The record gives the reactivity of an RNA of 177 nucleotides to 2A3 and DMS. It was measured as part of the RMDB library TTRDES.
RNA sequence: GGGAACGACUCGAGUAGAGUCGAAAAGAUAUGGAGCCAGUUGACAUGCGAUACGUUCGGAAACGAACGUAUUCGCAACAGCAACGGCUCCUAAGUCAAACCCUUGCUGCCUUCGGGCAGCAAGGGAGAUAACCACAUCCUUCGGGAUGUGGUUAUCAAAAGAAACAACAACAACAAC
Reactivity to 2A3 in 0.01 (KOAc 150mM, MgCl2 10mM, bicine 150mM(pH8.5), 24C), signal-to-noise 1, nucleotides 027 to 126: g020a000u000a030u110g010g000a020g010c040c140a160g040u000u000g050a180c250a300u300g020c000g000a000u010a000c000g010u010u000c000g010g010a000a030a010c010g000a020a000c000g000u000a000u030u040c010g000c020a030a000c030a000g030c000a000a000c000g000g030c000u020c000c010u000a010a010g010u020c010a070a050a300c010c000c000u020u000g000c000u010g010c000c030u060u180c300g150g010g000c030a000g020c000a000a000g010g000g010a010
Reactivity to DMS in 0.01 (KOAc 150mM, MgCl2 10mM, bicine 150mM(pH8.5), 24C), signal-to-noise 1, nucleotides 027 to 126: g000a000u000a150u030g010g000a000g000c000c000a180g050u000u000g000a020c040a300u030g000c000g000a020u000a000c000g000u000u000c000g000g020a060a080a080c000g000a020a010c000g010u000a000u040u010c010g000c000a020a060c210a170g000c000a010a010c000g000g000c010u000c000c000u000a020a060g000u000c000a140a110a270c000c000c000u000u000g030c000u000g000c000c000u000u020c300g000g000g010c000a040g030c000a000a000g000g000g000a000